[RMDB]
RNA sequence: GGGAACGACUCGAGUAGAGUCGAAAAAACAAUAGUAAUUGUUAGUCAUGUGUUAUGACGUCAGAAUGUUUCUGGCCUCUGAACAAAUGUCAUCUUUGCUGUGCUGGGCUGUGGAAAGAAUGAACAGCUACUGAGUAUAUGUGCAAUGUGCUGUUAACUUUUAAUCCCUGUUCGCAGGGAUUAAAAGAAAAGAAACAACAACAACAAC
Reactivity to 2A3 in 0.01 (KOAc 150mM, MgCl2 10mM, bicine 150mM(pH8.5), 24C), signal-to-noise 4, nucleotides 027 to 156: a000a000c160a060a080u220a060g090u160a140a120u080u080g010u060u060a070g010u040c030a020u060g050u000g040u130u080a040u090g030a020c010g000u000c010a010g040a100a110u180g080u100u110u010c010u010g020g000c010c010u000c040u070g050a040a010c010a030a080a060u100g020u040c020a050u000c070u030u060u070g030c020u030g010u020g030c010u040g010g060g000c010u010g000u000g010g030a070a090a060g060a010a100u110g020a030a000c010a000g010c030u070a070c020u030g010a010g070u060a050u030a050u260g070u040g080c030a040a060u060g000u020g010c010u000g020u070u050a030a010
Reactivity to DMS in 0.01 (KOAc 150mM, MgCl2 10mM, bicine 150mM(pH8.5), 24C), signal-to-noise 2, nucleotides 027 to 156: a060a030c050a050a100u000a110g030u000a080a170u000u000g010u000u000a090g010u010c010a060u020g000u000g000u000u010a100u010g010a040c060g000u000c040a040g000a070a100u000g030u020u000u000c030u000g010g020c020c030u000c040u000g010a040a060c050a050a060a060u000g000u000c020a150u010c030u000u000u010g030c040u010g010u010g010c040u010g000g020g030c030u000g040u000g030g010a100a050a110g010a080a040u000g020a040a020c030a050g000c010u000a150c040u010g020a200g040u000a060u010a090u020g050u000g000c040a110a100u000g030u010g000c000u030g010u000u010a070a140